Conditions: 150 mM KOAc, 10 mM MgCl2 and 150 mM bicine (pH 8.5), 24 C. This 177-nucleotide RNA was probed chemically with 2A3 and DMS. As a SHAPE reagent, 2A3 marks flexible, mostly unpaired nucleotides at the ribose 2'-OH. Reactivities are given for positions 27 through 126.
RNA sequence: GGGAACGACUCGAGUAGAGUCGAAAAGCUGCGUUCUUUGAUGUCACCACCGAUGUGAUAUGGCAAGCCGCAGUUGGCAAAGGAAACGUAGGGGCCACGCUCGAACAUGAUGAUUUCAGCGUCUUCGGGUCAAGUAGUUAUUCGUAACUACUUGACCAAAAGAAACAACAACAACAAC
Reactivity to 2A3 in 0.01 (KOAc 150mM, MgCl2 10mM, bicine 150mM(pH8.5), 24C), signal-to-noise 9, nucleotides 027 to 126: g020c000u010g000c010g020u080u150c030u050u060u140g070a030u030g010u010c000a010c030c010a140c070c110g090a140u160g010u010g010a010u020a030u060g140g030c070a030a030g090c000c000g010c020a020g010u060u070g030g000c050a060a060a080g060g030a080a060a010c060g030u080a050g010g010g030g000c010c010a020c010g010c000u040c050g020a040a020c020a060u230g030a080u090g040a060u100u080u070c030a020g020c000g050u010c020u050u060c030g040
Reactivity to DMS in 0.01 (KOAc 150mM, MgCl2 10mM, bicine 150mM(pH8.5), 24C), signal-to-noise 9, nucleotides 027 to 126: g010c010u000g010c010g000u000u030c010u000u000u030g020a150u000g000u000c000a020c010c100a210c170c230g010a140u030g010u000g010a020u000a020u000g010g020c090a030a020g010c300c010g000c020a040g000u010u000g010g000c080a070a090a050g000g010a030a060a040c080g010u010a070g010g000g000g000c050c050a070c030g020c020u000c080g000a040a050c130a110u020g010a100u010g010a110u000u000u000c050a060g010c060g010u000c050u000u010c300g010